Structure probing data (2A3 and DMS) for a 177-nucleotide construct.
For 2A3 the reverse transcriptase was SuperScript II with manganese.
The reactions ran in a buffer of 150 mM KOAc, 10 mM MgCl2 and 150 mM bicine (pH 8.5), at 24 C.
For DMS, 1,738 sequencing reads were counted.
The data come from the RNA Mapping Database (RMDB), library TTRDEL.
[RMDB]
RNA sequence: GGGAACGACUCGAGUAGAGUCGAAAAGAUAUGGAGACAUCGGGAGCCUUUGUGUCGGAAACGACACUUAGGCAUCGAUCGAGUGUCUCCUAAGUCAAAGCACGUAAGACUUCGGUCUUACGUGCAACCUGAGAGAAUCGUUCGCGAUUCUCUCAGGAAAAGAAACAACAACAACAAC
Reactivity to 2A3 in 0.01 (KOAc 150mM, MgCl2 10mM, bicine 150mM(pH8.5), 24C), signal-to-noise 1, nucleotides 027 to 126: g000a000u010a000u050g000g000a000g010a030c010a000u000c020g000g030g020a010g040c000c010u010u010u010g000u010g000u040c000g000g000a000a000a000c000g000a010c010a010c010u000u020a010g000g000c010a010u030c000g000a000u000c010g000a120g260u100g010u000c000u050c000c000u010a000a000g000u000c000a130a110a010g000c000a010c020g000u000a000a010g000a000c000u040u120c300g080g020u000c000u020u000a010c010g000u000g020c010a000a000
Reactivity to DMS in 0.01 (KOAc 150mM, MgCl2 10mM, bicine 150mM(pH8.5), 24C), signal-to-noise 1, nucleotides 027 to 126: g000a000u000a010u000g000g000a020g010a010c000a010u000c010g010g020g000a000g000c000c010u000u000u000g000u000g000u000c000g020g010a020a020a010c000g020a010c000a000c000u000u010a010g010g050c000a110u000c250g010a040u010c000g000a060g030u010g000u000c000u000c010c000u000a000a050g000u010c000a100a130a120g010c010a010c000g000u000a000a010g000a010c000u000u000c220g030g000u000c000u000u000a000c000g030u000g010c020a000a000